[RMDB]
An RNA of 177 nucleotides, treated with 2A3 and read out base by base.
For 2A3 the reverse transcriptase was SuperScript II with manganese.
RNA sequence: GGGAACGACUCGAGUAGAGUCGAAAAGCUCGGAGACGAGCAAGGCUGACAAAACGGUGUCCCAACCUCCACGUGGUGUCGGCUGGAUAAUGCUGCAUUAUGUUGCAUUUAUCAACUGGGAAGGAAAGGGCACUACUAUCUUCGGAUAGUAGUGCCCAAAAGAAACAACAACAACAAC
Reactivity to 2A3 in 0.01 (KOAc 150mM, MgCl2 10mM, bicine 150mM(pH8.5), 24C), signal-to-noise 1, nucleotides 027 to 126: g000c000u000c000g020g000a070g030a030c000g000a000g000c000a000a030g000g000c000u040g000a000c000a030a010a030a000c030g090g010u040g090u100c000c000c000a000a050c040c020u090c070c020a040c090g110u090g020g020u000g010u030c000g000g040c020u040g010g010a010u000a000a000u060g000c000u000g000c040a130u150u080a120u300g060u000u030g000c000a030u050u050u070a020u000c000a060a080c150u140g000g110g000a090a000g000g130a030a040a160